[RMDB]
Structure probing data (2A3 and DMS) for a 207-nucleotide construct. For DMS, 2,774 sequencing reads were counted. 2A3 is a SHAPE reagent: it acylates the 2'-hydroxyl of flexible nucleotides of all four kinds. The reactions ran in a buffer of 150 mM KOAc, 10 mM MgCl2 and 150 mM bicine (pH 8.5), at 24 C.
RNA sequence: GGGAACGACUCGAGUAGAGUCGAAAACAUUGUUCUGAUCAUCUGAAGAUCAGCUAUUAGAAGAGAAAGAUCAGUUAAGUCCUUUGGACCUGAUCAGCUUGAUACAAGAACUACUGAUUUCAGCUUCAAAACGGGUGCUACUUCGGUAGCACCCGAACCUUCUACUUAUCUUCGGAUAAGUAGAAGGAAAAGAAACAACAACAACAAC
Reactivity to 2A3 in 0.01 (KOAc 150mM, MgCl2 10mM, bicine 150mM(pH8.5), 24C), signal-to-noise 5, nucleotides 027 to 156: c040a060u110u170g030u140u060c020u040g010a040u050c050a030u020c040u130g070a110a050g030a140u010c010a000g000c020u100a130u220u150a100g100a140a030g020a030g040a090a130a020g010a010u020c010a010g020u110u180a190a020g010u040c020c010u080u200u300g010g020a010c000c010u020g000a020u020c010a020g050c000u040u080g030a040u090a160c070a080a070g030a130a020c030u080a030c000u100g000a070u000u030u060c010a020g030c050u080u070c100a020a050a070a040c010g000g000g010u010g000c000u000a000c000u020u050c110g050g000u000a000g000c020a000c000c000c010g000a000a000
Reactivity to DMS in 0.01 (KOAc 150mM, MgCl2 10mM, bicine 150mM(pH8.5), 24C), signal-to-noise 1, nucleotides 027 to 156: c070a170u000u000g010u000u000c000u030g000a070u010c020a120u010c060u000g000a100a230g020a010u000c000a030g040c050u000a110u000u000a070g020a120a120g010a110g010a190a110a140g000a020u000c000a020g010u000u010a050a100g020u000c000c010u010u000u010g000g020a010c030c000u000g000a080u000c060a100g010c060u000u000g000a130u020a130c100a090a150g010a070a080c040u010a040c000u000g010a020u010u000u020c050a070g010c110u000u000c040a060a040a110a130c010g010g020g080u010g000c060u000a020c020u000u000c240g080g000u010a000g000c000a000c050c000c020g000a000a020